[RMDB]
RNA sequence: GGGAACGACUCGAGUAGAGUCGAAAAUGGGCCGUGGCUCGCACACCGGCGUCCCCCAAGAUGUCUAUGGCAAAGCCGGCUGCCAGGCCGCUCAGGCCCACGCUCAGGCCGGCGCUAGCUGGAGGCAAGGAGAACAAGGAUUCGUCCUUGUUCUCCUAAAAGAAACAACAACAACAAC
Reactivity to DMS in 0.01 (KOAc 150mM, MgCl2 10mM, bicine 150mM(pH8.5), 24C), signal-to-noise 3, nucleotides 027 to 126: u010g000g000g020c030c030g010u010g000g020c050u000c240g010c100a110c070a110c030c040g020g010c030g000u000c040c020c000c090c130a140a090g000a140u000g010u000c030u000a100u000g010g000c040a050a110a300g040c010c010g020g010c100u000g040c060c060a200g010g000c010c010g000c180u010c170a150g000g020c000c000c050a040c220g010c080u010c110a150g030g010c000c000g000g020c010g030c080u010a100g010c020u000g010g000a070g000g000c040a090
Reactivity to 2A3 in 0.01 (KOAc 150mM, MgCl2 10mM, bicine 150mM(pH8.5), 24C), signal-to-noise 1, nucleotides 027 to 126: u090g000g040g020c040c020g020u050g010g060c070u070c180g010c070a100c000a000c030c090g030g000c030g130u170c030c010c000c020c020a040a030g050a100u180g060u030c030u080a120u140g030g020c000a070a000a020g010c010c000g000g000c000u020g000c010c010a000g000g000c010c000g000c060u180c040a020g000g010c010c030c010a020c020g010c010u050c060a100g060g050c010c000g000g020c000g020c030u070a030g000c030u050g050g030a020g020g020c040a050